[RMDB]
RNA sequence: GGGAACGACUCGAGUAGAGUCGAAAAGUGCGAAGAAGGCUGUAUCCUGCGUAGAGAGCUGUAUCUGUAGAGAGCUGUUUCUUAGCACAGAAAUACUUAGCACGCAGGAAAUACUUAGCUCGCUGAAGAUAUUGUGUCAUUUCGAUGGUACAAUAUCAAAAGAAACAACAACAACAAC
Reactivity to DMS in 0.01 (KOAc 150mM, MgCl2 10mM, bicine 150mM(pH8.5), 24C), signal-to-noise 9, nucleotides 027 to 126: g010u020g000c010g010a090a060g010a090a080g010g010c120u010g020u010a100u000c010c000u000g010c010g010u000a090g010a260g010a050g000c140u010g020u010a080u010c010u000g010u010a110g010a060g000a050g020c250u030g010u040u030u010c030u010u010a110g040c140a050c020a020g000a020a070a060u020a050c030u000u010a080g020c170a050c020g010c000a010g000g000a010a040a060u020a050c020u020u020a080g010c030u000c030g010c020u000g010a140a100
Reactivity to 2A3 in 0.01 (KOAc 150mM, MgCl2 10mM, bicine 150mM(pH8.5), 24C), signal-to-noise 9, nucleotides 027 to 126: g110u080g010c020g030a040a030g100a080a050g230g010c040u020g020u050a090u300c000c000u010g000c000g010u060a060g050a020g020a020g200c050u030g010u040a060u050c000u010g030u060a060g040a020g020a010g170c070u070g140u130u230u040c050u090u180a020g020c030a000c000a020g000a010a100a010u060a010c020u060u050a020g040c020a000c010g000c000a000g000g000a020a090a000u030a000c010u070u100a010g010c010u020c040g010c020u050g020a090a030
Source: RMDB library OK1LIB, as collected in RNAgym. The record gives the reactivity of an RNA of 177 nucleotides to DMS and 2A3. For 2A3 the reverse transcriptase was SuperScript II with manganese. Reactivities are given for positions 27 through 126.